RNA sequence: GGGAACGACUCGAGUAGAGUCGAAAACAAAGUGCAAGUCAUAUUUACCAAGAAACAGGUGGCUUACAUAAUGCUGCUAUAAGCGAUGGUUUGACAUUUUUUGUACAUCGACAAGACAUUGGUAGACCCCAAUCGGUAAGUUCGCUUACCGAUUGGGAAAAGAAACAACAACAACAAC
Reactivity to DMS in 0.01 (KOAc 150mM, MgCl2 10mM, bicine 150mM(pH8.5), 24C), signal-to-noise 2, nucleotides 027 to 126: c090a130a070a130g010u000g010c040a070a100g000u010c010a070u000a080u000u000u000a120c020c060a040a060g000a060a090a180c130a100g000g020u000g000g010c000u010u000a060c170a050u000a040a070u000g020c070u000g000c070u000a120u010a120a140g000c000g020a000u000g010g000u010u000u010g010a030c010a030u000u000u000u050u000u000g010u000a100c040a020u000c030g000a100c090a070a080g000a140c140a230u010u010g000g000u000a010g020a050c210
Reactivity to 2A3 in 0.01 (KOAc 150mM, MgCl2 10mM, bicine 150mM(pH8.5), 24C), signal-to-noise 3, nucleotides 027 to 126: c010a010a080a000g100u090g060c030a030a060g070u090c020a000u030a110u120u110u050a040c020c020a030a040g100a120a110a010c080a050g080g000u020g000g000c000u040u080a080c070a140u300a090a040u210g010c010u000g000c010u080a050u040a300a040g050c020g050a010u020g080g070u080u170u300g110a030c020a050u140u120u040u040u030u120g020u040a010c010a000u020c040g050a050c050a000a020g060a030c030a080u000u020g040g010u050a020g050a060c040
Conditions: 150 mM KOAc, 10 mM MgCl2 and 150 mM bicine (pH 8.5), 24 C. Structure probing data (DMS and 2A3) for a 177-nucleotide construct. Reactivities are given for positions 27 through 126. Source: RMDB library OK2TRN, as collected in RNAgym. 2A3 is a SHAPE reagent: it acylates the 2'-hydroxyl of flexible nucleotides of all four kinds.